Structure probing data (2A3 and DMS) for a 177-nucleotide construct. Conditions: 150 mM KOAc, 10 mM MgCl2 and 150 mM bicine (pH 8.5), 24 C. Source: RMDB library TTRDES, as collected in RNAgym. Values cover nucleotides 27 to 126.

RNA sequence: GGGAACGACUCGAGUAGAGUCGAAAAGAUAUGGAUGUGAAGGAGGACGUAUAGCGAAGUUUCGGAAACGAAACUACGCUGCAAACUCCUCACAUCCUAAGUCAAAAGUCGCAGUUCGCUGCGACAACAUGUCCUCGAACUUCGGUUCGAGGACAUGAAAAGAAACAACAACAACAAC
Reactivity to 2A3 in 0.01 (KOAc 150mM, MgCl2 10mM, bicine 150mM(pH8.5), 24C), signal-to-noise 1, nucleotides 027 to 126: g010a000u050a010u090g000g000a000u030g050u030g140a230a120g010g010a020g040g030a090c300g300u300a170u300a300g000c010g020a060a010g030u000u000u010c000g000g010a060a000a000c000g000a000a000a010c020u030a010c010g010c010u000g010c030a120a120a300c000u010c000c000u000c000a000c000a000u000c010c020u000a000a000g030u000c000a000a000a000a230g020u000c000g020c000a030g000u100u180c290g010c110u030g000c030g020a010c000a010a000
Reactivity to DMS in 0.01 (KOAc 150mM, MgCl2 10mM, bicine 150mM(pH8.5), 24C), signal-to-noise 1, nucleotides 027 to 126: g000a000u000a160u000g000g000a000u000g000u000g000a090a030g020g010a000g000g040a300c260g030u000a030u050a000g000c000g010a140a020g010u000u000u000c000g000g000a070a040a100c000g010a010a000a010c000u000a050c000g010c000u000g010c110a060a160a130c000u010c000c010u020c010a020c000a000u010c000c000u000a000a100g010u010c000a110a140a160a150g040u000c020g000c010a000g000u000u000c300g010c030u000g040c000g010a000c020a040a130